RNA sequence: GGGAACGACUCGAGUAGAGUCGAAAAGCGUGUCAGCUGACUCUGUAAACCUCUGCUGUGUUGUUGCACUGGUCGGCGUUUUGUCAGCCUGAGUAUUCAGCACAGCAGGGCUACAGAGACAUGAUCAUGUUCGGGCUGAGUUCGCUCAGCCCGAACAAAAAGAAACAACAACAACAAC
Reactivity to 2A3 in 0.01 (KOAc 150mM, MgCl2 10mM, bicine 150mM(pH8.5), 24C), signal-to-noise 1, nucleotides 027 to 126: g040c030g000u080g060u130c050a050g040c050u050g020a060c000u050c000u000g050u030a050a120a100c000c000u070c000u020g000c000u000g000u000g000u000u000g020u000u010g000c030a010c050u000g000g050u030c020g040g090c020g000u010u030u300u300g000u030c010a000g000c000c000u000g000a000g030u000a030u040u000c000a000g000c000a000c000a000g000c010a000g000g000g030c000u000a000c000a000g000a000g000a010c010a020u060g010a070u120c150a040
Description: The record gives the reactivity of an RNA of 177 nucleotides to 2A3. The RNA was probed in 150 mM KOAc, 10 mM MgCl2 and 150 mM bicine (pH 8.5) at 24 C.